[RMDB]
RNA sequence: GGGAACGACUCGAGUAGAGUCGAAAAACGGUGCGGAAGUUCGCGCUUCCGUGAAACGCGAAAAUCGGACGGUGGCUGCAAGUCGCAUCGCAAAACCGCGGCAAGUGGAGUUAGCGAUAGGAGGCUGAAACCAUCCAACACUUCGGUGUUGGAUGAAACCUACUAUGAACUUCGGUUCAUAGUAGGUAAAAGAAACAACAACAACAAC
Reactivity to 2A3 in 0.01 (KOAc 150mM, MgCl2 10mM, bicine 150mM(pH8.5), 24C), signal-to-noise 5, nucleotides 027 to 156: a000c020g020g020u050g010c000g000g030a030a030g050u110u170c070g050c020g000c060u020u000c010c000g010u000g040a080a070a000c070g020c030g070a060a030a010a070u110c020g010g010a020c020g040g000u020g020g040c040u060g010c080a040a040g030u050c020g020c050a020u020c020g000c010a060a060a000a010c040c000g020c000g080g050c130a140a070g010u030g030g040a090g020u080u080a020g030c010g040a030u030a080g030g050a020g010g020c020u030g020a070a000a010c030c000a000u000c000c000a000a000c000a000c000u040u080c200g070g000u000g000u000u010g000g000a000u000g000a010a000
Reactivity to DMS in 0.01 (KOAc 150mM, MgCl2 10mM, bicine 150mM(pH8.5), 24C), signal-to-noise 3, nucleotides 027 to 156: a050c010g020g020u010g010c010g010g010a070a070g020u010u000c190g030c290g000c010u000u000c000c100g000u010g010a030a050a030c000g030c020g010a070a050a100a110u000c060g010g000a080c000g010g010u000g030g020c020u000g010c050a070a090g020u000c030g020c020a030u000c020g000c030a060a080a100a120c020c040g010c060g020g020c070a060a120g030u010g010g010a160g010u000u000a180g010c000g000a050u000a100g010g010a040g020g030c030u010g010a080a080a120c130c020a030u020c010c000a020a040c000a000c000u000u010c270g040g010u000g020u000u000g000g030a000u000g000a010a060
Chemical mapping of a 207-nucleotide RNA with 2A3 and DMS.
Values cover nucleotides 27 to 156.
Conditions: 150 mM KOAc, 10 mM MgCl2 and 150 mM bicine (pH 8.5), 24 C.
The data come from the RNA Mapping Database (RMDB), library M2RFPK.